[RMDB]
Structure probing data (2A3 and DMS) for a 207-nucleotide construct. For DMS, 6,407 sequencing reads were counted. Reactivities are given for positions 27 through 156. The reactions ran in a buffer of 150 mM KOAc, 10 mM MgCl2 and 150 mM bicine (pH 8.5), at 24 C. For DMS the reverse transcriptase was MarathonRT. For 2A3, 7,663 sequencing reads were counted. It was measured as part of the RMDB library M2RFPK.
RNA sequence: GGGAACGACUCGAGUAGAGUCGAAAACCGCAUGCCCAGGUGGCCGCGAUCUUCAAGGCUACGGCGCGGAUAGGUCCGAGCUGAUCGUUUUCCUCCAACGACGCUAUGGCGUCUUUCCUUCACCCGCAAAAUCGUCUCCCGUUCGCGGGAGACGAAACACUAUAUACUCCUUCGGGAGUAUAUAGUGAAAAGAAACAACAACAACAAC
Reactivity to 2A3 in 0.01 (KOAc 150mM, MgCl2 10mM, bicine 150mM(pH8.5), 24C), signal-to-noise 6, nucleotides 027 to 156: c020c000g010c060a080u160g000c020c030c040a040g080g060u020g030g000c010c010g020c030g070a100u050c060u220u130c130a070a030g010g000c000u040a020c010g010g000c040g000c020g010g010a050u100a120g040g030u030c020c040g020a020g010c050u060g050a230u030c030g040u030u020u060u080c030c020u040c030c020a050a030c040g010a000c010g000c020u050a090u240g100g010c020g010u010c000u030u030u030c010c000u070u090c040a070c040c020c020g070c090a040a060a030a180u030c000g000u000c000u000c000c000c010g010u030u050c140g000c010g080g000g000a000g000a000c000g000a000a000a000
Reactivity to DMS in 0.01 (KOAc 150mM, MgCl2 10mM, bicine 150mM(pH8.5), 24C), signal-to-noise 2, nucleotides 027 to 156: c010c010g010c040a090u010g030c010c040c010a180g040g020u010g000g020c020c060g050c110g020a050u000c030u000u000c040a080a230g030g020c000u000a050c000g020g010c010g000c030g010g020a150u010a080g030g020u000c020c020g000a060g000c020u010g000a070u000c040g010u000u000u000u000c000c010u010c040c030a080a120c040g040a050c010g040c020u000a100u000g060g010c030g010u010c010u000u000u000c020c010u000u000c050a110c010c010c050g040c100a060a060a090a110u000c010g000u000c000u000c010c010c020g020u000u000c240g020c030g030g000g010a010g010a010c010g000a020a020a080